[RMDB]
RNA sequence: GGGAACGACUCGAGUAGAGUCGAAAAACGAGCUGACGUUAGAAAUGGUCACCGACGAAGAGCGCGACUACAUGUACGCCGAGUACGCCAAGGAUCCACGGAUGAAGGCGAAUGUCGGAAUCCGUCGCGAUAAUGACGGUUUCGACCGUCAUUAUCGAAAAGAAACAACAACAACAAC
Reactivity to DMS in 0.01 (KOAc 150mM, MgCl2 10mM, bicine 150mM(pH8.5), 24C), signal-to-noise 7, nucleotides 027 to 126: a090c060g000a100g030c040u010g000a050c030g020u020u020a080g010a050a100a090u020g000g010u000c050a070c050c030g010a080c040g000a110a060g010a110g010c050g000c040g010a040c030u010a070c180a080u020g020u030a050c040g010c010c020g000a120g000u010a070c030g010c020c010a100a090g010g020a050u020c030c070a060c070g010g000a020u000g000a300a300g000g000c010g010a080a040u020g010u000c020g000g010a300a050u000c020c000g000u000c120g010
Reactivity to 2A3 in 0.01 (KOAc 150mM, MgCl2 10mM, bicine 150mM(pH8.5), 24C), signal-to-noise 9, nucleotides 027 to 126: a000c050g010a040g040c040u040g050a030c040g060u080u090a100g080a070a150a080u160g030g020u060c030a020c070c020g060a070c050g050a100a070g040a030g060c060g020c030g070a030c010u120a030c020a110u180g040u080a030c030g020c020c010g010a020g040u030a020c020g000c010c010a050a060g090g030a030u010c020c020a010c020g040g000a020u020g050a040a020g000g010c040g100a210a110u300g010u010c010g020g030a010a020u010c010c000g020u020c040g000

Overview:
Structure probing data (DMS and 2A3) for a 177-nucleotide construct. For DMS, 15,007 sequencing reads were counted. For 2A3 the reverse transcriptase was SuperScript II with manganese. Values cover nucleotides 27 to 126. For DMS the reverse transcriptase was MarathonRT.